RNA sequence: GGGAACGACUCGAGUAGAGUCGAAAAGAGUAGACACUCUGUGCCGGAGGUCUGUAGGCCAGAACAACAGAAGUCCGGCACAGAGCGUCCAGUUAAAGUCUUACUAGAAGUUCGCUUCUAGUAAGACGCAUGCUACACAGUUCGCUGUGUAGCAUGCAAAAGAAACAACAACAACAAC
Reactivity to DMS in 0.01 (KOAc 150mM, MgCl2 10mM, bicine 150mM(pH8.5), 24C), signal-to-noise 3, nucleotides 027 to 126: g000a120g010u000a100g010a020c010a050c000u000c000u010g020u010g000c010c000g010g010a050g000g010u000c000u000g010u000a100g020g000c100c190a110g010a110a090c090a130a010c010a010g010a020a020g010u000c000c010g000g010c000a000c000a000g000a000g010c020g030u000c000c020a080g010u000u000a060a090a150g000u000c000u000u000a010c000u000a010g000a010a000g020u000u010c240g020c000u000u010c000u000a000g010u000a000a000g000a000c000
Reactivity to 2A3 in 0.01 (KOAc 150mM, MgCl2 10mM, bicine 150mM(pH8.5), 24C), signal-to-noise 4, nucleotides 027 to 126: g050a020g120u240a040g000a000c000a000c020u000c000u000g010u020g000c020c000g030g000a060g050g150u020c010u000g020u030a060g020g110c050c100a090g090a240a070c040a030a000c000a010g020a050a020g200u000c000c000g000g030c010a000c000a000g000a000g000c000g000u000c000c010a020g010u060u170a150a090a020g010u010c000u000u000a000c000u000a000g000a000a010g010u030u170c220g030c130u000u010c000u000a000g000u000a000a000g000a000c000